[RMDB]
The record gives the reactivity of an RNA of 177 nucleotides to 2A3 and DMS.
The RNA was probed in 150 mM KOAc, 10 mM MgCl2 and 150 mM bicine (pH 8.5) at 24 C.
The data come from the RNA Mapping Database (RMDB), library OK2TRN.
For DMS, 937 sequencing reads were counted.
For 2A3 the reverse transcriptase was SuperScript II with manganese.
Values cover nucleotides 27 to 126.
RNA sequence: GGGAACGACUCGAGUAGAGUCGAAAAUAAUAAUUUACAAAAUUGCUUUCGAUAUGUAGAAGCACCAACAGCUACAGGGUCAAAUACAAUAGGUAAGCCUGCCUCAUUUGCCGUUUGAGCAAUCGCAUACAUGGUGAAGGUUCGCCUUCACCAUGUAAAAAGAAACAACAACAACAAC
Reactivity to 2A3 in 0.01 (KOAc 150mM, MgCl2 10mM, bicine 150mM(pH8.5), 24C), signal-to-noise 1, nucleotides 027 to 126: u070a000a000u040a040a100u090u200u200a040c010a010a140a070a110u120u070g010c000u080u170u020c030g030a010u000a050u300g050u030a030g000a000a000g090c000a010c000c000a000a080c010a010g090c000u070a030c030a030g080g030g000u050c070a010a050a070u050a130c000a060a120u090a050g040g020u010a080a000g050c030c030u050g000c000c030u070c010a150u070u020u070g030c040c050g130u000u130u080g070a080g030c080a040a080u050c040g000c050a030
Reactivity to DMS in 0.01 (KOAc 150mM, MgCl2 10mM, bicine 150mM(pH8.5), 24C), signal-to-noise 2, nucleotides 027 to 126: u010a080a080u010a140a100u010u000u000a060c050a080a070a040a150u000u000g000c060u000u000u000c060g010a110u000a100u010g020u000a060g000a070a050g050c050a100c130c050a060a100c110a040g000c000u010a020c070a050g000g020g030u000c010a030a050a050u000a090c100a050a060u000a050g000g040u000a040a080g000c010c040u000g020c050c060u000c070a050u000u000u010g000c040c020g000u000u020u000g020a040g000c050a090a050u010c090g050c140a180